[RMDB]
This 177-nucleotide RNA was probed chemically with 2A3 and DMS. The data come from the RNA Mapping Database (RMDB), library OK1LIB.

RNA sequence: GGGAACGACUCGAGUAGAGUCGAAAACAAGCAAGUAUCCGAGAGAUUAGCACGCCGAUCUCUGCGGCACCAUGAUAUGUUACACCAUGGCAUCUGUGGCACAUAGCAUCUUAUUGGCGUGACGAGAGGCUGGUUACGGGUUCGCCCGUGGCCAGCCAAAAGAAACAACAACAACAAC
Reactivity to 2A3 in 0.01 (KOAc 150mM, MgCl2 10mM, bicine 150mM(pH8.5), 24C), signal-to-noise 6, nucleotides 027 to 126: c030a030a030g150c030a050a060g070u110a110u070c000c000g010a000g000a010g000a010u000u020a030g040c000a000c000g000c000c000g010a010u000c010u010c020u080g170c000g010g000c020a030c030c030a030u060g020a030u070a020u130g100u090u170a070c060a030c060c020a050u060g060g000c050a060u040c050u080g040u030g020g010c040a030c020a060u080a030g030c000a030u040c070u150u160a180u060u190g020g000c010g000u020g010a000c020g040a060g010a030
Reactivity to DMS in 0.01 (KOAc 150mM, MgCl2 10mM, bicine 150mM(pH8.5), 24C), signal-to-noise 3, nucleotides 027 to 126: c100a080a140g030c180a090a070g030u010a090u010c000c000g020a150g010a000g000a000u000u000a090g000c000a020c030g000c010c040g010a020u000c000u010c000u020g040c000g010g000c300a170c060c160a030u040g010a030u010a020u020g000u000u000a120c120a060c100c080a080u020g010g020c140a020u000c110u000g000u010g000g000c050a010c110a060u000a070g010c070a020u010c180u000u050a070u010u000g000g030c010g000u010g000a060c080g010a110g000a160
Background:
2A3 adducts were read by reverse transcription with SuperScript II with manganese. Reactivities are rounded to 0.1 and cut off at 0 and 3. Values cover nucleotides 27 to 126.